[RMDB]
RNA sequence: GGGAACGACUCGAGUAGAGUCGAAAACUAUAAUUUUGGGAAGGAACAUUAACCACUUUGUUCAUUCGUCGUUUUCCAGUGGCUGUAUUUUAGUAACUUUUAGUGAUUCUUUGCGUGGGUUAUUAAGGGCCGAGCAAGACUCUUUUGGUUAUUACUGUAAUGACAUACCUUUCGAGGUAUGUCAUUAAAAAGAAACAACAACAACAAC
Reactivity to 2A3 in 0.01 (KOAc 150mM, MgCl2 10mM, bicine 150mM(pH8.5), 24C), signal-to-noise 4, nucleotides 027 to 156: c010u030a050u120a300a200u120u140u150u180g090g010g000a050a040g030g000a040a000c020a050u090u090a100a070c050c010a040c080u130u090u110g030u060u070c050a090u100u050c030g010u010c000g000u030u040u090u040c030c010a020g010u020g100g000c050u030g040u170a200u090u130u020u040a030g000u010a050a050c040u020u020u050u080a040g020u040g080a140u090u060c030u050u100u090g000c040g040u080g060g010g000u020u050a060u050u080a130a080g120g000g000c040c010g010a010g010c000a060a000g020a040c020u020c000u070u090u080u080g040g000u050u030a030u030u100a070c070u110g020
Reactivity to DMS in 0.01 (KOAc 150mM, MgCl2 10mM, bicine 150mM(pH8.5), 24C), signal-to-noise 3, nucleotides 027 to 156: c070u010a100u020a060a130u000u010u000u000g020g030g010a080a060g010g010a050a030c010a060u000u010a060a180c070c080a080c090u010u000u000g020u010u000c020a150u000u000c040g030u010c030g010u000u000u010u010c020c020a120g040u000g010g050c020u000g000u000a050u000u000u000u000a070g010u000a040a070c020u000u010u000u000a070g020u000g010a110u010u000c030u010u010u000g020c040g030u000g030g030g010u010u000a110u010u000a090a100g020g010g040c020c020g010a100g010c060a040a080g020a050c010u010c020u000u000u000u000g010g020u000u000a050u000u000a060c100u000g010

This 207-nucleotide RNA was probed chemically with 2A3 and DMS. For DMS, 7,636 sequencing reads were counted. Reactivities are given for positions 27 through 156. Source: RMDB library OK3TST, as collected in RNAgym. 2A3 adducts were read by reverse transcription with SuperScript II with manganese.